[RMDB]
RNA sequence: GGGAACGACUCGAGUAGAGUCGAAAAUUACCAUCAGUGAGUCGGUGAAUUACGACUUCCUCGUGACCGCCGUUGAACUUGACGGGAGUUGUUUGAAAUUAACUGCCGCUUCCGCCAUACCUGCGUCGGAAUAGGACAUGUUCGCAUGUCCUAUUCCAAAAGAAACAACAACAACAAC
Reactivity to DMS in 0.01 (KOAc 150mM, MgCl2 10mM, bicine 150mM(pH8.5), 24C), signal-to-noise 3, nucleotides 027 to 126: u000u000a160c030c000a150u010c060a050g010u010g000a120g020u010c020g010g000u000g000a120a140u000u010a070c030g000a040c090u010u000c140c040u000c050g010u000g000a120c060c030g020c030c020g020u000u010g000a100a060c140u010u000g030a040c060g020g010g010a040g010u000u000g010u000u010u000g010a070a140a130u010u010a050a080c050u000g010c040c080g000c020u000u000c000c030g030c000c010a060u000a050c060c040u000g000c080g030u000c200
Reactivity to 2A3 in 0.01 (KOAc 150mM, MgCl2 10mM, bicine 150mM(pH8.5), 24C), signal-to-noise 3, nucleotides 027 to 126: u070u030a070c010c010a050u060c030a040g060u030g090a030g050u020c020g050g020u040g120a130a100u140u080a040c020g010a010c000u050u050c010c010u020c000g050u040g050a070c040c000g000c030c000g080u010u070g070a100a050c060u050u070g010a030c020g000g020g020a050g020u020u050g080u050u180u100g180a170a190a130u170u110a080a080c030u040g000c000c000g000c000u000u000c000c000g000c000c000a030u080a100c050c020u040g060c030g070u060c070